[RMDB]
RNA sequence: GGGAACGACUCGAGUAGAGUCGAAAAAAACAUUAAGUACUGGUUAAAGGAUGAUCUUUGUCCUAAAUCCAUUCUACCUAGCCUAUCCAUCUAUGGACAUUUUAUUAACAGUGAUAGACAGCUGGUCUAAACUACGAUCUUUCGAGAUCGUAGUUUAAAAAGAAACAACAACAACAAC
Reactivity to 2A3 in 0.01 (KOAc 150mM, MgCl2 10mM, bicine 150mM(pH8.5), 24C), signal-to-noise 2, nucleotides 027 to 126: a000a000a000c140a110u220u180a120a000g030u040a060c060u060g000g000u040u060a160a040a040g010g000a020u080g010a080u090c050u150u070u130g030u030c010c000u020a050a030a040u000c020c000a000u040u030c040u030a080c000c010u020a060g010c000c000u010a070u080c030c020a040u050c060u110a120u110g020g030a010c040a030u130u160u020u030a170u030u080a070a080c030a030g010u010g090a020u030a050g090a060c060a000g090c030u030g030g000u020c080
Reactivity to DMS in 0.01 (KOAc 150mM, MgCl2 10mM, bicine 150mM(pH8.5), 24C), signal-to-noise 4, nucleotides 027 to 126: a060a040a050c090a110u000u000a080a070g020u010a040c100u000g010g000u000u000a070a110a060g010g010a050u000g000a100u000c150u010u010u000g010u000c000c010u000a020a080a050u000c030c010a020u000u000c080u000a090c030c030u010a090g010c020c010u010a060u000c030c040a080u010c090u000a070u000g010g000a060c100a050u000u010u000u000a110u000u010a080a110c100a040g020u000g000a080u010a040g010a050c070a090g010c030u000g010g020u010c140

This 177-nucleotide RNA was probed chemically with 2A3 and DMS. For DMS, 4,081 sequencing reads were counted. Conditions: 150 mM KOAc, 10 mM MgCl2 and 150 mM bicine (pH 8.5), 24 C. For 2A3, 1,773 sequencing reads were counted.